[RMDB]
RNA sequence: GGGAACGACUCGAGUAGAGUCGAAAAGGCAAUUGAAGGGAAAUUGUCGCUGGAUAUGCUUUAGAUGGAAAUUCCCUACAAGAUGAUGGGUAUGGGUGACACUGCCUCAAAGGAUGGCAUAUCAUGGCUAGUGGUGCCACUUCGGUGGCACCACUAGAAAAGAAACAACAACAACAAC
Reactivity to 2A3 in 0.01 (KOAc 150mM, MgCl2 10mM, bicine 150mM(pH8.5), 24C), signal-to-noise 1, nucleotides 027 to 126: g000g010c000a000a120u000u000g090a140a210g120g040g050a000a060a060u040u010g000u000c000g010c040u000g090g000a000u000a000u000g020c040u140u160u300a050g010a000u120g230g110a000a190a000u070u000c000c000c000u000a000c120a000a030g180a240u260g000a030u030g030g030g030u030a070u080g000g000g040u000g010a010c000a010c070u100g070c000c000u090c010a060a060a040g000g100a030u110g000g070c000a050u020a000u030c050a010u080g000g000
An RNA of 177 nucleotides, treated with 2A3 and read out base by base. Conditions: 150 mM KOAc, 10 mM MgCl2 and 150 mM bicine (pH 8.5), 24 C. It was measured as part of the RMDB library OK1LIB. For 2A3 the reverse transcriptase was SuperScript II with manganese. Values are in units of 0.01, from 0 to 300, in steps of 10.